[RMDB]
RNA sequence: GGGAACGACUCGAGUAGAGUCGAAAACACCACAUGAAGGUCCUUCUGUUGCCGCAGCGCCACAUGUGGGCGUGCCGUGAUAAUUUGGGGAAAUAGAGCCGUUACCACGGCUUGAAUGAACGUGAUGGGAUCGACUAAAUUUCGAUUUAGUCGAUCCAAAAGAAACAACAACAACAAC
Reactivity to DMS in 0.01 (KOAc 150mM, MgCl2 10mM, bicine 150mM(pH8.5), 24C), signal-to-noise 2, nucleotides 027 to 126: c090a240c000c000a060c080a010u010g000a110a200g000g000u000c080c050u030u000c060u000g000u000u000g030c050c100g010c060a070g020c150g020c010c010a040c030a060u010g010u010g000g000g000c040g020u000g000c060c080g010u000g030a030u010a030a090u000u000u000g030g000g010g010a030a060a080u020a170g000a030g010c000c000g000u010u010a110c240c180a130c020g010g000c000u000u000g020a090a100u000g010a060a120c090g020u000g000a140u000g020
Reactivity to 2A3 in 0.01 (KOAc 150mM, MgCl2 10mM, bicine 150mM(pH8.5), 24C), signal-to-noise 2, nucleotides 027 to 126: c060a050c020c020a020c030a060u080g050a210a040g080g040u040c020c040u030u170c020u050g120u080u060g070c050c040g020c020a020g050c020g000c010c000a050c050a070u160g020u300g030g020g030c000g000u050g020c000c000g000u000g000a030u030a080a050u090u080u160g010g040g030g020a000a060a090u070a060g040a050g010c010c020g000u010u080a030c070c040a020c030g000g000c000u000u040g020a020a050u100g020a000a000c030g050u060g050a120u120g060

This 177-nucleotide RNA was probed chemically with DMS and 2A3. Source: RMDB library OK2TST, as collected in RNAgym. For DMS, 1,979 sequencing reads were counted. For DMS the reverse transcriptase was MarathonRT. Values cover nucleotides 27 to 126.